[RMDB]
RNA sequence: GGGAACGACUCGAGUAGAGUCGAAAAUGCUUAAGGAGUGGCUGGUCCACAUAAUAAGUGUUCAGUUACUUGUUGAUAGACUGUGUAAUCUAAGAAAGAUAGUAUUAAUGUCACUUUAGAAUUAGCAUGUAUCUGCGUAGGGUCUGCCUCUGGUUUACUUUUAUAAUGGCUUCGGCCAUUAUAAAAGAAAAGAAACAACAACAACAAC
Reactivity to DMS in 0.01 (KOAc 150mM, MgCl2 10mM, bicine 150mM(pH8.5), 24C), signal-to-noise 2, nucleotides 027 to 156: u010g000c050u010u010a120a110g050g030a130g020u000g030g020c020u010g030g000u010c030c030a020c070a090u000a070a140u010a040a050g030u000g010u010u010c060a190g020u010u000a040c080u010u000g020u010u010g000a160u010a060g020a050c020u000g030u030g040u000a110a090u010c050u010a060a140g020a140a080a080g000a100u000a060g010u000a120u010u000a040a060u010g010u000c020a080c060u010u000u000a070g010a080a120u000u000a060g010c050a060u000g000u010a060u020c030u000g020c070g020u010a170g010g020g030u000c030u000g010c040c020u000c040u010g000g000u000u000u000a090
Reactivity to 2A3 in 0.01 (KOAc 150mM, MgCl2 10mM, bicine 150mM(pH8.5), 24C), signal-to-noise 3, nucleotides 027 to 156: u070g000c000u100u040a080a100g060g010a050g030u020g000g000c020u050g040g100u140c070c030a050c030a050u300a160a040u080a160a010g020u020g020u040u080c030a030g010u080u080a020c040u020u070g050u060u060g060a050u010a070g050a040c040u020g000u050g030u100a010a000u010c010u040a060a030g040a120a150a000g040a090u070a050g050u120a090u120u170a120a070u140g030u030c010a020c070u080u070u090a060g050a170a100u070u010a030g010c050a040u050g050u120a040u010c020u020g060c020g030u060a040g000g030g010u020c020u040g000c000c000u010c050u020g000g000u100u140u100a060

This 207-nucleotide RNA was probed chemically with DMS and 2A3. For 2A3, 1,228 sequencing reads were counted. The DMS profile rests on 4,557 reads. The reactions ran in a buffer of 150 mM KOAc, 10 mM MgCl2 and 150 mM bicine (pH 8.5), at 24 C.